Structure probing data (DMS and 2A3) for a 177-nucleotide construct.
The RNA was probed in 150 mM KOAc, 10 mM MgCl2 and 150 mM bicine (pH 8.5) at 24 C.
The data come from the RNA Mapping Database (RMDB), library OK2TST.
RNA sequence: GGGAACGACUCGAGUAGAGUCGAAAAGCAUAUAUCCACAAAACUGGUGAUGUGGAUCUCUCACUCAUGGACAGCAGAUUUGUUUUCGUCUGCAAUGGUGAUGAUAACAAGUUCUCUAUUUCGCCAGCUCCUCAUACAUCUUCGGAUGUAUGAGGAGAAAAGAAACAACAACAACAAC
Reactivity to DMS in 0.01 (KOAc 150mM, MgCl2 10mM, bicine 150mM(pH8.5), 24C), signal-to-noise 4, nucleotides 027 to 126: g010c210a130u010a130u010a100u000c000c000a030c000a030a070a120a180c010u000g000g020u000g000a110u000g020u000g010g000a020u010c240u000c060u000c020a020c050u010c080a050u000g020g000a120c210a130g000c010a010g000a010u000u010u000g030u000u000u000u000c140g000u000c010u010g010c050a090a070u010g010g010u010g010a020u010g010a050u010a070a080c140a070a120g010u000u010c010u000c010u000a170u010u000u000c010g030c000c000a010g010
Reactivity to 2A3 in 0.01 (KOAc 150mM, MgCl2 10mM, bicine 150mM(pH8.5), 24C), signal-to-noise 5, nucleotides 027 to 126: g030c020a010u140a000u010a010u250c000c000a000c000a000a090a030a070c010u010g020g000u030g030a010u020g010u010g000g000a020u000c020u000c010u000c000a030c000u270c030a040u080g070g100a100c080a060g000c000a010g050a080u060u100u150g300u110u150u130u210c060g010u000c000u020g000c010a020a060u040g030g000u020g010a060u080g020a010u080a160a030c070a120a070g030u040u000c010u000c010u050a170u050u120u060c010g000c010c000a010g000